Overview:
This 177-nucleotide RNA was probed chemically with DMS and 2A3.

[RMDB]
RNA sequence: GGGAACGACUCGAGUAGAGUCGAAAAACCUAGUAUGAUCUAGCGUACAUGAUACUCAGGUACGUACGAGACUAGGCGCGCGUACGAUCGACUACUAGACUGUCGCUGAGUACAGAGACGCGUACACGUCUAGUAAGAUGUUCGCAUCUUACUAGACAAAAGAAACAACAACAACAAC
Reactivity to DMS in 0.01 (KOAc 150mM, MgCl2 10mM, bicine 150mM(pH8.5), 24C), signal-to-noise 9, nucleotides 027 to 126: a100c010c000u000a020g010u000a040u010g010a120u010c090u010a170g000c010g010u000a060c070a190u000g010a190u010a020c050u000c010a010g010g000u000a010c000g010u000a040c070g000a110g010a040c040u000a020g000g010c020g010c050g000c020g010u000a010c010g010a190u000c010g010a020c010u010a130c180u010a160g010a140c200u010g000u000c010g020c030u000g000a100g000u010a020c040a080g000a150g000a050c030g010c010g020u010a070c200a090c200
Reactivity to 2A3 in 0.01 (KOAc 150mM, MgCl2 10mM, bicine 150mM(pH8.5), 24C), signal-to-noise 9, nucleotides 027 to 126: a000c020c000u020a040g030u060a100u240g120a170u150c100u120a030g010c000g020u020a030c030a090u110g090a160u090a080c030u010c050a010g050g000u020a010c000g010u020a020c020g020a020g040a080c030u050a050g070g000c020g000c000g000c000g030u010a010c020g090a250u050c020g010a010c010u070a030c020u070a130g120a300c100u070g010u000c000g000c070u010g000a000g010u000a010c010a000g090a020g010a040c010g000c010g010u020a040c090a020c100

The reactions ran in a buffer of 150 mM KOAc, 10 mM MgCl2 and 150 mM bicine (pH 8.5), at 24 C.